[RMDB]
RNA sequence: GGGAACGACUCGAGUAGAGUCGAAAAAUCGAUGCAUAUGCCGAUUAAUGCCGCGAUGCAUGCAUUAGCCGCGCGAUCGAUUACGUAAUAUUACGAUCGGCCGCGUAAUGCAUGCGCAUAUGCCGGCAACUACGACCCACUUCGGUGGGUCGUAGUUAAAAGAAACAACAACAACAAC
Reactivity to 2A3 in 0.01 (KOAc 150mM, MgCl2 10mM, bicine 150mM(pH8.5), 24C), signal-to-noise 1, nucleotides 027 to 126: a000u050c030g020a030u090g050c010a030u020a010u160g000c030c030g020a020u030u140a090a040u110g060c000c040g030c010g080a010u180g010c000a000u000g000c000a020u000u000a010g070c110c010g020c020g000c030g120a170u000c000g030a040u030u130a030c030g010u050a070a060u220a190u300u180a090c020g030a010u000c040g010g040c040c000g000c020g040u020a010a000u020g000c000a000u000g030c010g080c000a000u010a020u080g010c020c000g050g000c020
Reactivity to DMS in 0.01 (KOAc 150mM, MgCl2 10mM, bicine 150mM(pH8.5), 24C), signal-to-noise 1, nucleotides 027 to 126: a020u000c020g020a060u000g010c000a030u000a030u000g020c030c010g000a030u010u010a120a100u040g020c010c030g050c150g020a160u000g020c010a010u000g000c030a010u000u000a070g020c210c080g000c030g010c070g000a060u000c010g010a040u000u010a120c100g020u000a060a170u030a160u010u000a080c010g000a060u000c000g010g000c040c040g020c000g030u000a020a000u000g040c000a000u000g010c010g000c040a040u000a020u000g000c010c080g000g010c090